[RMDB]
RNA sequence: GGGAACGACUCGAGUAGAGUCGAAAAAGAACAAUUUGCUGAGGGCUAUUGAGGCGCAACAGCAUCUGUUGCAACUCACAGUCUGGGGCAUCAAGCAGCUCCAGGCAAGAGUCCUGGCUGUGGAAAGUUGGGUAAUACACUUCGGUGUAUUACCCAAAAAAGAAACAACAACAACAAC
Reactivity to 2A3 in 0.01 (KOAc 150mM, MgCl2 10mM, bicine 150mM(pH8.5), 24C), signal-to-noise 1, nucleotides 027 to 126: a000g230a060a000c050a060a120u000u280u080g000c000u130g140a010g040g000g000c000u030a140u070u090g000a000g000g090c000g000c080a000a040c000a000g080c120a100u090c030u030g000u000u000g000c000a000a060c000u000c000a010c000a020g000u000c000u000g000g000g020g020c030a040u120c030a050a050g140c050a000g000c000u060c050c020a000g000g000c040a040a000g170a000g040u000c000c000u000g040g000c020u040g020u090g020g020a060a100a070g060
Reactivity to DMS in 0.01 (KOAc 150mM, MgCl2 10mM, bicine 150mM(pH8.5), 24C), signal-to-noise 2, nucleotides 027 to 126: a100g010a120a200c090a050a100u060u020u010g010c020u000g040a090g000g020g000c000u020a170u040u050g000a010g010g010c300g000c000a030a020c000a000g010c230a070u030c020u020g030u040u020g000c010a010a290c000u000c000a040c290a190g000u000c030u000g020g000g000g000c000a060u050c140a080a100g030c280a070g000c030u000c000c000a000g010g050c010a160a080g000a020g000u000c000c020u000g000g110c020u000g030u000g000g000a150a050a050g020
Chemical mapping of a 177-nucleotide RNA with 2A3 and DMS. The 2A3 profile rests on 671 reads. Reactivities are given for positions 27 through 126. 2A3 adducts were read by reverse transcription with SuperScript II with manganese. The reactions ran in a buffer of 150 mM KOAc, 10 mM MgCl2 and 150 mM bicine (pH 8.5), at 24 C. DMS adducts were read by reverse transcription with MarathonRT.